RNA sequence: GGGAACGACUCGAGUAGAGUCGAAAAGGCCUUGCCCGACUGAGAGUGCUCGCUGAAAGAGGCUGCGACGCGGGUUAUUCAGUUCGAUGCGCCCAGGCUGACGGUAGGACGCCUAACCCGAUUCAGAAAUCUUAACCGGGUUCGCCCGGUUAAGAUUAAAAGAAACAACAACAACAAC
Reactivity to DMS in 0.01 (KOAc 150mM, MgCl2 10mM, bicine 150mM(pH8.5), 24C), signal-to-noise 1, nucleotides 027 to 126: g000g010c010c000u010u090g000c010c000c080g000a090c000u020g000a090g010a260g000u010g060c010u000c010g050c000u010g000a050a090a200g000a070g000g000c050u070g000c050g020a110c210g000c050g060g000g000u010u010a000u000u000c000a010g010u000u050c090g000a010u050g010c060g000c040c020c000a050g000g020c150u010g000a050c300g040g070u010a000g050g090a090c180g030c030c000u000a070a220c060c000c000g000a080u000u050c050a050g020a120
Reactivity to 2A3 in 0.01 (KOAc 150mM, MgCl2 10mM, bicine 150mM(pH8.5), 24C), signal-to-noise 2, nucleotides 027 to 126: g020g030c000c000u000u010g000c020c000c000g010a060c020u000g010a010g020a030g280u070g030c060u010c010g020c000u060g030a030a030a000g110a060g020g000c040u080g030c040g090a070c110g000c070g030g030g000u010u000a050u000u020c010a000g010u030u160c020g050a090u170g020c040g000c050c010c020a000g030g000c090u060g020a070c020g010g040u050a010g000g080a020c160g050c000c000u020a070a060c040c000c000g040a010u130u050c000a000g100a140
This 177-nucleotide RNA was probed chemically with DMS and 2A3.
The RNA was probed in 150 mM KOAc, 10 mM MgCl2 and 150 mM bicine (pH 8.5) at 24 C.
For 2A3 the reverse transcriptase was SuperScript II with manganese.